[RMDB]
RNA sequence: GGGAACGACUCGAGUAGAGUCGAAAAAGCAGACAGCGUAGUUGUCAGCGAUGAGGAGCUACUACGUUGGCUCCAGUUCAAAGGCACAAAAGAAGAAGCCGCCGUAGAAAUCAGCGAAAAACGCAAAACCAUGAUGGCUGUAGUAUUAGUCAGCUCACGACUUUUCUCUAUUCGUAGAGAAAAGUCGAAAAGAAACAACAACAACAAC
Reactivity to 2A3 in 0.01 (KOAc 150mM, MgCl2 10mM, bicine 150mM(pH8.5), 24C), signal-to-noise 1, nucleotides 027 to 156: a000g000c030a010g030a000c000a010g060c020g040u060a030g010u090u120g080u100c090a010g050c030g050a070u060g030a100g050g000a010g020c000u030a010c000u000a030c070g060u100u010g020g000c000u030c000c000a000g000u000u150c060a080a000a040g000g000c020a010c020a060a180a030a000g080a150a060g040a110a030g100c110c060g000c020c050g060u010a010g140a020a090a040u160c070a020g000c010g000a000a050a050a090a050c030g100c040a080a140a140a030c030c030a030u170g010a080u170g010g000c000u020g020u070a020g130u020a120u060u020a020g080u060c000a000g000c020u030c030a010